[RMDB]
Chemical mapping of a 207-nucleotide RNA with 2A3 and DMS.

RNA sequence: GGGAACGACUCGAGUAGAGUCGAAAAGAGCUCGAGAUGAAUUCUUAAACGGUAAGGGCAUCUGUAUCCGUCUUAAAAGCCUUAAGGCAUACUGAAGGCUGUGUAAACGCUACACACUUCAGUGGAGCGUUGAUGUGAAAUCAAUUCCACCGAGCAGCGUAACGUGAAUGUUCGCAUUCACGUUACGAAAAGAAACAACAACAACAAC
Reactivity to 2A3 in 0.01 (KOAc 150mM, MgCl2 10mM, bicine 150mM(pH8.5), 24C), signal-to-noise 6, nucleotides 027 to 156: g060a000g010c010u010c010g060a050g070a210u080g040a080a090u190u080c070u150u180a120a100a060c080g080g020u080a040a040g050g080g010c050a050u040c020u020g010u030a130u030c010c020g030u010c030u050u150a140a140a060a050g040c020c000u050u060a060a050g050g000c040a060u090a190c000u020g000a000a000g000g000c090u010g000u000g000u010a120a180a000c080g000c070u010a000c010a000c010a010c020u080u110c050a040g010u020g010g010a040g010c000g060u050u110g010a030u020g020u030g090a100a060a060u100c040a010a030u090u010c010c010a020c010c010g000a000g000c010a010g050
Reactivity to DMS in 0.01 (KOAc 150mM, MgCl2 10mM, bicine 150mM(pH8.5), 24C), signal-to-noise 3, nucleotides 027 to 156: g020a270g020c020u010c010g010a060g020a120u000g010a150a080u000u000c040u010u000a070a070a090c050g000g020u010a090a120g010g020g030c090a080u000c040u010g010u010a120u000c030c020g000u000c050u000u000a080a040a110a100g000c040c010u010u010a090a040g030g010c150a130u010a110c030u000g020a060a040g020g040c040u000g000u000g020u000a070a050a080c110g030c030u000a020c010a040c010a100c150u000u010c170a110g010u010g010g000a020g040c050g020u010u000g000a090u000g010u010g000a080a080a040u000c060a030a080u020u020c020c030a080c040c000g010a050g000c010a090g020
Background: It was measured as part of the RMDB library OK3TST. The reactions ran in a buffer of 150 mM KOAc, 10 mM MgCl2 and 150 mM bicine (pH 8.5), at 24 C. For DMS, 5,810 sequencing reads were counted.